[RMDB]
RNA sequence: GGGAACGACUCGAGUAGAGUCGAAAACCUCACUACAUUUUACAGUUCCUAAAGAAUUUGUGACAGGUACAGUAAAACGUAUUGCAAGGUUUAUCAGUUCCUAUAAACAGGUAAAUAACAAUAUAUGAAAAGCAAAGACUGUUCGCAGUCUUUGCAACAGAGACACACCGUUCGCGGUGUGUCUCUGAAAAGAAACAACAACAACAAC
Reactivity to 2A3 in 0.01 (KOAc 150mM, MgCl2 10mM, bicine 150mM(pH8.5), 24C), signal-to-noise 2, nucleotides 027 to 156: c000c010u010c000a010c000u000a000c000a070u000u010u000u000a000c020a020g000u000u030c000c040u080a120a070a070g150a220a280u190u300u200g120u040g040a040c100a070g010g010u020a000c070a030g000u010a000a000a000a000c020g000u000a000u000u000g010c040a080a050g000g020u040u050u010a110u040c010a010g030u000u000c000c000u090a100u220a080a060a030c070a010g060g070u070a120a140a020u130a210a030c060a130a000u100a000u040a090u300g060a020a140a010a010g010c010a000a000a000g000a000c000u000g010u010u040c180g000c100a000g000u000c000u030u000u000g000c000a000a000